Structure probing data (2A3) for a 207-nucleotide construct. Conditions: 150 mM KOAc, 10 mM MgCl2 and 150 mM bicine (pH 8.5), 24 C.
RNA sequence: GGGAACGACUCGAGUAGAGUCGAAAAUGGCGAGAACAGUUGGCACGGGCUUUCGUGGGUGGUGGGCCGCAGCUGCUGCAUGGGGACACCAUCUACAGUGGGGCCGACCGCUAUCGCCUGCACACAGCUGCUGGUGGCACCGUGCACCUGGAGAUCACUGCAGUACUGAUUUCGAUCAGUACUGCAGAAAAGAAACAACAACAACAAC
Reactivity to 2A3 in 0.01 (KOAc 150mM, MgCl2 10mM, bicine 150mM(pH8.5), 24C), signal-to-noise 2, nucleotides 027 to 156: u100g000g000c020g040a030g070a130a010c020a040g120u180u170g230g000c220a170c280g000g060g000c080u090u020u160c060g000u060g070g050g000u070g000g000u000g000g220g060c040c060g200c000a020g010c040u300g060c080u280g020c070a300u030g010g000g000g100a000c000a020c000c000a000u000c030u050a020c020a060g020u030g060g000g000g090c040c000g090a050c030c010g000c000u000a010u060c000g000c000c000u000g000c020a000c000a000c020a030g010c020u080g000c000u110g000g000u030g000g080c010a090c060c070g140u070g000c010a010c040c000u040g200g010a020g000a030u200c090a000